[RMDB]
RNA sequence: GGGAACGACUCGAGUAGAGUCGAAAAUUACCGAAUCGGACGAUCCCGACCAUUUCAUCUUCUUCGAAACGUUCCAGCGCGUCACUUAAUCCGGAGCGCACGCCGCGAGGCAAAUCGCAUUGCGUGAAUAUUUAGGUCUAUUCGUAGACCUAAAUAUAAAAGAAACAACAACAACAAC
Reactivity to DMS in 0.01 (KOAc 150mM, MgCl2 10mM, bicine 150mM(pH8.5), 24C), signal-to-noise 9, nucleotides 027 to 126: u010u020a150c060c040g010a090a090u020c050g010g000a080c090g000a080u010c030c010c010g010a090c090c060a100u010u010u000c040a080u000c040u000u000c040u010u010c030g000a040a080a150c040g000u000u000c010c010a100g020c050g010c030g010u000c030a050c070u010u010a080a100u010c100c080g000g000a100g000c050g010c020a040c070g020c030c300g000c050g000a060g000g010c140a050a070a080u000c040g010c020a110u010u010g010c020g010u010g000a090
Reactivity to 2A3 in 0.01 (KOAc 150mM, MgCl2 10mM, bicine 150mM(pH8.5), 24C), signal-to-noise 9, nucleotides 027 to 126: u110u050a080c010c030g020a040a060u080c030g020g020a020c040g030a070u050c010c000c010g010a020c020c030a070u020u050u060c020a060u010c010u090u000c010u060u050c030g030a060a060a050c020g030u030u020c010c010a030g010c020g000c010g110u050c020a040c110u050u120a040a030u070c030c020g040g010a040g020c020g010c020a010c020g010c030c010g010c010g010a020g060g020c000a030a060a090u050c020g010c030a060u020u170g010c010g030u040g050a070